The record gives the reactivity of an RNA of 170 nucleotides to 2A3. For 2A3, 4,554 sequencing reads were counted. The RNA was probed in 150 mM KOAc, 10 mM MgCl2 and 150 mM bicine (pH 8.5) at 24 C.
RNA sequence: GGGAACGACUCGAGUAGAGUCGAAAAUUCCUUCUUCUGUGCUCCUGCCUCUCCUUGUCGGUGAACCCCCUGGCCUUGGGUUUCCUCCCAGGUCCGAAAUCAACCUCCAUGGUUUCCUGCCUGGGCCAUACUGACGGCUUCGGCCGUCAGAAAAGAAACAACAACAACAAC
Reactivity to 2A3 in 0.01 (KOAc 150mM, MgCl2 10mM, bicine 150mM(pH8.5), 24C), signal-to-noise 2, nucleotides 027 to 129: u040u020c020c000u000u050c010u000u000c030u010g090u080g080c050u000c010c040u030g090c010c000u050c020u060c040c000u010u030g060u050c030g040g040u030g050a040a030c010c000c000c010c050u060g010g000c010c000u000u070g000g000g000u050u040u000c000c010u050c000c020c000a000g000g000u000c040c010g040a000a000a000u040c000a050a210c020c040u020c030c020a030u020g000g000u010u000u040c050c010u000g000c000c000u000g000g030g030c020c000a090u150a050